An RNA of 177 nucleotides, treated with 2A3 and DMS and read out base by base. Source: RMDB library OK2TST, as collected in RNAgym. The DMS profile rests on 2,597 reads. The 2A3 profile rests on 1,908 reads.

RNA sequence: GGGAACGACUCGAGUAGAGUCGAAAAGACCUCCUCUCAGACGAUGAGGAGUCGUCACAGAGAGUUGCCAACGCCGGGCCAUCUUUCAGGCCCUUGACUUACUCGGAUGCUGUGCGUCUAAGCCAGACAGCACUAUGUCUUUCGAGACAUAGUGCUGAAAAGAAACAACAACAACAAC
Reactivity to 2A3 in 0.01 (KOAc 150mM, MgCl2 10mM, bicine 150mM(pH8.5), 24C), signal-to-noise 2, nucleotides 027 to 126: g010a010c010c000u000c000c010u030c010u000c010a080g050a260c040g010a090u180g010a020g140g070a010g040u040c050g080u070c020a010c060a040g040a000g000a010g010u020u120g040c050c000a070a040c070g080c080c020g000g000g030c010c000a050u080c130u060u160u130c100a040g000g000c040c000c000u000u080g010a020c000u030u100a030c000u010c040g050g020a040u100g020c030u020g040u060g040c030g040u000c080u120a040a010g060c000c000a010g030a070
Reactivity to DMS in 0.01 (KOAc 150mM, MgCl2 10mM, bicine 150mM(pH8.5), 24C), signal-to-noise 3, nucleotides 027 to 126: g000a050c050c000u010c030c000u000c010u000c020a190g000a090c110g010a030u000g010a080g000g010a120g000u010c110g020u000c020a080c130a080g010a090g000a020g000u000u000g000c010c060a030a080c230g010c120c190g010g010g000c010c010a080u000c150u020u000u010c180a150g010g010c010c010c000u000u010g020a020c020u000u000a030c040u000c020g010g010a120u000g010c020u000g000u000g010c050g010u000c040u050a080a130g000c020c030a090g000a200